[RMDB]
This 177-nucleotide RNA was probed chemically with 2A3 and DMS.
The RNA was probed in 150 mM KOAc, 10 mM MgCl2 and 150 mM bicine (pH 8.5) at 24 C.
It was measured as part of the RMDB library OK2TST.
RNA sequence: GGGAACGACUCGAGUAGAGUCGAAAAGACACCAAGCAAGAAGGAGAACACGGUAGAAAUCUGGUUCAAGGUGGUGAAUCCGUCAGACUCGAGGUAGUCGGCGUAACGACGUGGCAUGCCCUCGUUACAUUUACAACUUAUUCGUAAGUUGUAAAUGAAAAGAAACAACAACAACAAC
Reactivity to 2A3 in 0.01 (KOAc 150mM, MgCl2 10mM, bicine 150mM(pH8.5), 24C), signal-to-noise 9, nucleotides 027 to 126: g050a000c020a020c030c010a010a010g080c030a040a070g060a050a030g100g070a060g030a070a020c070a020c140g070g010u080a040g120a060a120a040u050c040u060g050g020u050u040c030a040a050g050g010u040g000g030u040g040a030a050u030c020c010g010u020c030a040g010a050c010u020c030g090a070g060g060u120a020g020u020c020g020g000c020g020u030a060a030c060g040a010c040g030u050g020g000c040a050u140g050c000c010c000u010c010g030u040u040a030
Reactivity to DMS in 0.01 (KOAc 150mM, MgCl2 10mM, bicine 150mM(pH8.5), 24C), signal-to-noise 9, nucleotides 027 to 126: g010a130c090a100c030c020a090a100g020c090a070a120g010a100a070g010g000a110g010a080a090c080a060c080g010g010u000a070g010a060a090a080u000c040u000g010g010u000u000c060a050a120g010g020u000g010g010u000g000a080a080u000c050c020g010u000c080a090g010a040c030u000c030g010a090g020g000u010a040g010u000c020g010g010c090g010u000a040a060c070g010a050c120g020u000g010g000c050a090u000g000c040c010c020u000c050g010u000u000a090